This 207-nucleotide RNA was probed chemically with 2A3.
The RNA was probed in 150 mM KOAc, 10 mM MgCl2 and 150 mM bicine (pH 8.5) at 24 C.

RNA sequence: GGGAACGACUCGAGUAGAGUCGAAAAUUUUGAAUGUGAUUAGGGAUCUGACACGCCCACGUCUUGGUAGUCAUCAAAUAGAGACCGAUAUUAGCACAUCUUCGCAGUCGCCUACCACGGAGACACCACGAAACAUACAUAUAACGUGGGCGAGACGCCUCCUUGGUGAUUUCGAUCACCAAGGAGGAAAAGAAACAACAACAACAAC
Reactivity to 2A3 in 0.01 (KOAc 150mM, MgCl2 10mM, bicine 150mM(pH8.5), 24C), signal-to-noise 2, nucleotides 027 to 156: u150u110u020u080g120a110a130u060g040u120g040a100u080u100a150g000g000g060a020u020c020u030g030a030c050a030c040g010c000c010c000a020c000g030u000c010u030u060g090g000u040a180g020u000c030a040u000c010a200a110a030u070a060g080a000g020a020c020c040g010a020u030a040u210u120a040g030c030a010c030a080u020c090u100u050c080g000c040a010g020u060c040g040c040c030u030a040c040c060a020c050g040g000a030g000a000c010a000c010c000a070c050g040a000a060a000c040a040u290a020c030a010u130a080u040a260a000c010g000u000g010g000g000c000g000a000g000a000c020g000